[RMDB]
RNA sequence: GGGAACGACUCGAGUAGAGUCGAAAACAGCGAGCACUACCGCCUGAGCUCCGCCUCCUGUCAGAUCAGCAGCGGCAUUAGAUUCUCACAGGGGCACAAACCCUAUUGGGAACCGCGCAUGAGAGGGAUCUAGGUUGCGUGCUCCUUAGGAGAAUCACCCGUAUUAUCGAUUCGUCGAUAAUACGGGAAAAGAAACAACAACAACAAC
Reactivity to DMS in 0.01 (KOAc 150mM, MgCl2 10mM, bicine 150mM(pH8.5), 24C), signal-to-noise 1, nucleotides 027 to 156: c060a100g000c070g000a050g000c030a100c050u000a020c000c010g060c040c070u040g000a060g030c020u010c000c040g040c040c010u020c030c020u010g010u000c020a110g030a120u010c010a090g020c110a220g020c020g000g030c040a120u000u000a100g020a030u000u000c010u000c010a100c080a130g000g030g040g060c010a020c060a010a040a080c020c000c050u000a210u040u000g010g020g000a070a160c000c000g010c030g040c120a180u000g020a160g010a070g030g030g000a150u000c060u030a030g020g010u000u020g020c050g010u000g000c000u000c010c040u010u000a040g020g000a040g000a040a030u000c010a060
Reactivity to 2A3 in 0.01 (KOAc 150mM, MgCl2 10mM, bicine 150mM(pH8.5), 24C), signal-to-noise 2, nucleotides 027 to 156: c010a000g020c010g020a000g020c000a000c030u060a110c080c020g040c020c060u060g030a010g000c040u040c020c050g020c050c030u110c000c020u040g120u100c090a040g000a170u020c020a020g060c030a000g030c010g000g000c000a010u030u040a050g020a010u020u020c000u000c010a050c010a010g000g000g010g000c000a010c000a000a030a020c030c000c000u040a070u120u240g060g000g040a070a040c000c010g010c030g020c090a160u120g050a060g040a080g130g040g000a000u010c010u030a010g020g000u050u060g070c060g000u000g010c030u030c000c000u080u130a060g050g000a000g000a010a000u000c010a020
This 207-nucleotide RNA was probed chemically with DMS and 2A3. The 2A3 profile rests on 1,271 reads.